Chemical mapping of a 207-nucleotide RNA with 2A3 and DMS. For 2A3 the reverse transcriptase was SuperScript II with manganese. The RNA was probed in 150 mM KOAc, 10 mM MgCl2 and 150 mM bicine (pH 8.5) at 24 C.
[RMDB]
RNA sequence: GGGAACGACUCGAGUAGAGUCGAAAAGCCAGGACUACCGCCAGCGUGCAACAGGCGGCAACGCCCCCGCUGACACUCUGACCAAUUGCUGAUGGAGCAUAAAACCCAAUGAAGAAGAAUACCCGUUUUGCUUUUAACGCUUACCUGCAGCAACUGGCAUUAUUGUCAACUUCGGUUGACAAUAAUGAAAAGAAACAACAACAACAAC
Reactivity to 2A3 in 0.01 (KOAc 150mM, MgCl2 10mM, bicine 150mM(pH8.5), 24C), signal-to-noise 5, nucleotides 027 to 156: g020c010c020a020g020g020a080c060u100a060c060c070g010c020c030a010g020c030g070u080g050c070a170a080c020a130g000g020c020g020g020c030a120a070c050g050c010c010c000c000c000g010c010u020g030a040c000a020c050u040c040u040g040a060c020c010a040a090u040u030g000c000u000g000a070u090g010g030a010g000c010a020u100a070a070a020a020c020c010c020a050a050u170g030a040a110g010a030a020g030a050a040u080a100c010c020c040g040u030u070u050u080g020c030u060u060u020u110a090a050c050g000c010u020u080a100c010c000u050g060c000a010g010c010a000a030c010u010g010g000
Reactivity to DMS in 0.01 (KOAc 150mM, MgCl2 10mM, bicine 150mM(pH8.5), 24C), signal-to-noise 3, nucleotides 027 to 156: g030c000c030a050g020g040a140c040u000a060c040c070g030c000c000a080g050c010g020u000g010c050a110a100c010a100g000g030c040g000g000c120a050a100c100g010c010c010c140c020c050g010c040u000g010a100c050a110c050u020c040u000g000a150c000c030a040a060u000u000g010c030u000g010a190u000g010g010a090g000c040a160u000a020a040a060a110c030c020c040a070a120u010g000a090a100g010a060a100g010a120a120u010a080c050c030c010g040u000u000u000u000g000c020u040u010u000u000a070a120c050g000c040u000u000a100c050c010u010g010c010a070g010c030a050a060c020u020g010g050